[RMDB]
RNA sequence: GGGAACGACUCGAGUAGAGUCGAAAAGAUAUGGAAAGCACGAAUGUAUGAACUACAGCCUCACUCGGAAACGAGUGCAGGCUGCAUACACUAUGCUUUCCUAAGUCAAAACUUGCGUUCGCGCAAGCCAUUACACGCGGUUCGCCGCGUGUAAUGGAAAAGAAACAACAACAACAAC
Reactivity to 2A3 in 0.01 (KOAc 150mM, MgCl2 10mM, bicine 150mM(pH8.5), 24C), signal-to-noise 4, nucleotides 027 to 126: g030a030u070a030u100g000g010a010a010a010g030c030a010c150g110a300a170u060g020u040a020u000g030a120a100c130u180a050c300a010g000c000c000u000c010a000c000u000c010g060g000a070a100a060c010g000a010g020u010g010c030a000g010g000c000u000g000c000a000u000a000c000a010c050u040a010u050g010c000u000u000u000c000c000u000a060a020g030u020c040a020a000a100a220c000u000u000g000c010g020u050u110c300g000c000g000c190a000a010g040
Reactivity to DMS in 0.01 (KOAc 150mM, MgCl2 10mM, bicine 150mM(pH8.5), 24C), signal-to-noise 4, nucleotides 027 to 126: g010a030u000a300u000g000g000a010a000a010g010c010a020c090g010a060a090u000g010u000a020u000g000a080a040c160u010a300c000a020g000c000c000u000c000a010c010u000c010g000g010a080a120a120c010g020a010g020u000g010c230a010g010g030c000u000g000c000a000u000a010c010a000c120u000a140u000g010c000u000u000u000c000c000u000a050a090g010u000c040a160a090a100a220c010u000u000g010c010g020u000u000c300g020c020g020c000a010a000g020